RNA sequence: GGGAACGACUCGAGUAGAGUCGAAAAAGACCGUCUGUUCAAGCGCCGCUCCAUCGUGGAUAGCAAACCCUGUCUCAAAGAGGACGAAGCUGCCGGCAUCCUCCGAUACCUCCAGGCCCAGCCGCUUCCACUGGUCAUACUUCGGUAUGACCAGUGGAAAAGAAACAACAACAACAAC
Reactivity to 2A3 in 0.01 (KOAc 150mM, MgCl2 10mM, bicine 150mM(pH8.5), 24C), signal-to-noise 2, nucleotides 027 to 126: a010g060a040c010c000g050u030c050u160g170u090u070c090a000a070g000c030g010c010c000g020c030u010c000c000a110u070c080g020u090g010g050a030u040a060g100c050a000a080a200c000c040c020u070g040u100c020u010c070a130a110a000g090a100g030g010a050c020g020a070a090g070c020u020g030c000c010g010g010c010a040u030c000c030u080c030c010g030a000u050a150c020c020u010c010c000a020g010g000c000c000c000a010g010c000c030g000c020u040u010